[RMDB]
Chemical mapping of a 177-nucleotide RNA with 2A3 and DMS. Source: RMDB library OK1LIB, as collected in RNAgym. The 2A3 profile rests on 27,835 reads. Reactivities are given for positions 27 through 126. 2A3 adducts were read by reverse transcription with SuperScript II with manganese.

RNA sequence: GGGAACGACUCGAGUAGAGUCGAAAAAGCCUCACCGGCAAUCAGACCGACUGGAUCAACAAACACACCGUCUACACGCAUGGCAACGGCUUCGUGGCCGCCCCGGCCAAUCGGGUGAACGCGGCGGACAUAAACUAGCAUUCGUGCUAGUUUAUGUAAAAGAAACAACAACAACAAC
Reactivity to 2A3 in 0.01 (KOAc 150mM, MgCl2 10mM, bicine 150mM(pH8.5), 24C), signal-to-noise 9, nucleotides 027 to 126: a000g040c010c000u050c030a080c020c020g020g010c040a020a080u110c040a040g110a110c010c020g040a040c040u060g030g040a060u090c050a050a120c030a060a160a010c040a010c010a020c060c020g040u020c020u070a040c050a020c070g070c030a060u100g050g000c030a070a020c020g040g000c000u120u100c070g060u110g040g000c010c000g030c010c000c000c000g040g000c020c010a040a080u130c040g020g000g020u080g040a030a020c060g000c010g040g010c010g020g010
Reactivity to DMS in 0.01 (KOAc 150mM, MgCl2 10mM, bicine 150mM(pH8.5), 24C), signal-to-noise 9, nucleotides 027 to 126: a080g000c020c010u010c080a120c080c050g000g000c060a080a100u010c090a070g000a100c060c030g010a090c050u010g000g010a070u020c080a080a070c160a060a080a080c090a080c060a070c050c000g000u010c030u010a080c100a050c080g010c070a080u020g000g010c060a080a090c070g000g000c030u020u020c120g010u020g000g010c000c000g010c020c010c020c050g010g000c040c040a050a050u010c070g000g000g020u020g020a050a080c120g010c070g010g000c000g010g010